[RMDB]
RNA sequence: GGGAACGACUCGAGUAGAGUCGAAAACAGACUCGAGCGAAAGCUCGGCGAAAGCCGCGUACAUGUGAUUGUCGGCCAGUGUACAGUCGACAGUUACUCUUCGGAGUAACAAUAGAAACAACAACAAGACGUAGGAGUGAUUCGUCACUCCUACGUCAAAAGAAACAACAACAACAAC
Reactivity to 2A3 in 0.01 (KOAc 150mM, MgCl2 10mM, bicine 150mM(pH8.5), 24C), signal-to-noise 3, nucleotides 027 to 126: c020a000g100a050c030u020c030g020a030g000c020g030a110a000a000g010c000u000c020g000g010c000g060a060a020a000g040c000c000g030c000g040u070a020c050a110u090g070u090g090a140u040u160g060u050c000g010g000c000c040a110g050u110g020u160a050c030a040g010u010c010g020a010c000a010g000u000u000a000c000u000c000u010u040c210g100g000a000g010u000a000a000c000a010a010u100a030g090a070a060a000c030a020a020c000a090a000c000a010a110
Reactivity to DMS in 0.01 (KOAc 150mM, MgCl2 10mM, bicine 150mM(pH8.5), 24C), signal-to-noise 2, nucleotides 027 to 126: c050a190g010a220c040u000c000g000a000g020c030g000a110a210a170g030c010u000c000g000g000c000g020a040a140a140g010c060c000g030c120g000u040a040c010a040u030g000u000g000a040u000u030g000u000c000g000g040c020c000a220g030u010g030u000a010c120a160g010u030c000g000a040c090a080g030u040u000a010c000u000c000u000u000c120g030g000a020g010u000a000a000c020a140a040u000a070g000a120a060a030c090a130a070c210a020a080c240a090a090

The record gives the reactivity of an RNA of 177 nucleotides to 2A3 and DMS. It was measured as part of the RMDB library OK1LIB. High 2A3 reactivity points to a flexible backbone, as in loops and unpaired stretches. For 2A3, 1,844 sequencing reads were counted. For DMS, 1,543 sequencing reads were counted. For 2A3 the reverse transcriptase was SuperScript II with manganese. The reactions ran in a buffer of 150 mM KOAc, 10 mM MgCl2 and 150 mM bicine (pH 8.5), at 24 C. Reactivities are given for positions 27 through 126.